RNA sequence: GGGAACGACUCGAGUAGAGUCGAAAACUGGAGUGGGCAACCACGAACGCGAGGACUGUGAAAACGGGGAGGCUGUGAGUAACAACGAUAACCUCCCCCGGUGAUUCGAUGGAGCGCCGCAAGGCGAGAGUUAGUACGUAUUCGUACGUACUAACUCAAAAGAAACAACAACAACAAC
Reactivity to 2A3 in 0.01 (KOAc 150mM, MgCl2 10mM, bicine 150mM(pH8.5), 24C), signal-to-noise 9, nucleotides 027 to 126: c040u060g060g040a070g030u060g010g020g010c040a070a050c010c010a020c020g030a040a010c040g010c010g030a030g040g020a040c040u060g030u060g220a060a080a040a060c060g000g000g000g000a000g000g000c080u070g040u030g170a040g060u110a060a040c070a030a020c040g040a040u060a090a020c000c000u000c000c000c010c000c000g000g010u030g020a210u040u030c030g020a060u090g050g060a090g040c010g000c010c010g030c070a050a060g010g000c040g010a060
Reactivity to DMS in 0.01 (KOAc 150mM, MgCl2 10mM, bicine 150mM(pH8.5), 24C), signal-to-noise 9, nucleotides 027 to 126: c030u010g020g010a200g010u010g000g000g010c170a110a130c020c010a020c020g000a120a110c110g010c050g010a060g000g000a060c040u010g010u020g010a070a040a100a080c210g020g000g000g010a020g010g010c030u000g000u010g010a300g000u000a100a100c300a110a030c010g000a160u010a060a140c010c000u000c010c000c000c000c010g000g010u010g010a100u010u000c030g000a070u010g000g010a120g000c020g010c010c000g000c200a060a090g000g000c010g000a060
Overview
Structure probing data (2A3 and DMS) for a 177-nucleotide construct. It was measured as part of the RMDB libraries RFM100 and RFMREP. For 2A3 the reverse transcriptase was SuperScript II with manganese. The RNA was probed in 150 mM KOAc, 10 mM MgCl2 and 150 mM bicine (pH 8.5) at 24 C.